[RMDB]
RNA sequence: GGGAACGACUCGAGUAGAGUCGAAAAUCCUAAGUCAGAUCGAUCUCGGAAGACCUUGGAUUUAAUCUUUGAGGCUCGGAAACGAGCCAAUGAUGAGAUUUGUCAGGUCCCGAUCUCGAUCUGAUAUGGAAAAUCAACACGUUUCGACGUGUUGAAAUGCAGAUAAUAGUUUCGACUAUUAUCUGCAAAAAGAAACAACAACAACAAC
Reactivity to DMS in 0.01 (KOAc 150mM, MgCl2 10mM, bicine 150mM(pH8.5), 24C), signal-to-noise 2, nucleotides 027 to 156: u000c010c000u000a030a220g000u010c010a020g020a010u000c000g000a020u010c080u020c020g020g050a120a190g000a000c040c040u000u000g020g010a040u000u010u000a050a000u000c000u010u000u010g000a130g010g010c000u000c020g010g020a150a120a300c010g020a020g030c000c000a020a020u000g010a160u000g000a030g000a030u000u010u000g020u000c000a010g000g030u000c000c000c000g030a060u000c060u000c000g000a000u000c010u020g000a000u000a090u010g010g000a070a060a110a150u010c000a000a020c000a000c010g050u000u010u000c280g020a130c040g080u000g010u000u060g000a000a080a130
Reactivity to 2A3 in 0.01 (KOAc 150mM, MgCl2 10mM, bicine 150mM(pH8.5), 24C), signal-to-noise 4, nucleotides 027 to 156: u010c010c000u030a110a020g010u000c000a000g000a000u000c000g000a010u010c000u010c050g080g000a240a150g010a080c020c010u090u240g100g010a040u140u190u300a010a010u020c010u000u020u020g020a020g000g000c000u000c010g040g010a040a080a080c000g000a000g000c000c020a010a020u040g010a010u020g010a010g000a010u000u010u010g020u010c010a000g000g010u010c000c000c010g000a010u000c010u000c020g000a010u000c000u000g000a000u000a020u010g030g030a040a110a010a090u070c000a000a000c000a000c000g020u050u110u170c240g120a020c000g000u010g000u000u010g000a010a000a010
Description
Conditions: 150 mM KOAc, 10 mM MgCl2 and 150 mM bicine (pH 8.5), 24 C. This 207-nucleotide RNA was probed chemically with DMS and 2A3. For 2A3, 5,247 sequencing reads were counted. In probing experiments dimethyl sulfate is read out at A N1 and C N3, which are open when not base-paired.